[RMDB]
An RNA of 177 nucleotides, treated with DMS and read out base by base.
The RNA was probed in 150 mM KOAc, 10 mM MgCl2 and 150 mM bicine (pH 8.5) at 24 C.
RNA sequence: GGGAACGACUCGAGUAGAGUCGAAAAGAUAUGGAUCAUAAUCCCUCCCACAUCACGCUAAGACAGCGUGGGAUCGGAAACGAUCCCACGUCGAGCGUGUUGUGGGAGAACUUAUGAUCCUAAGUCAGUAUCAUUGUUGCUUCGGCAACAAUGAUACAAAAGAAACAACAACAACAAC
Reactivity to DMS in 0.01 (KOAc 150mM, MgCl2 10mM, bicine 150mM(pH8.5), 24C), signal-to-noise 1, nucleotides 027 to 126: g000a060u000a300u000g000g040a000u000c010a000u000a000a040u020c080c130c020u000c010c000c000a020c040a020u000c000a000c020g040c000u000a240a080g040a100c300a070g020c030g000u000g000g000g030a000u000c000g000g000a200a060a230c030g010a000u000c000c000c000a000c020g010u000c010g010a020g010c050g030u000g000u000u000g060u000g000g000g000a000g000a010a060c210u000u000a030u000g010a000u000c000c000u000a000a080g000u000c020a200
For DMS the reverse transcriptase was MarathonRT.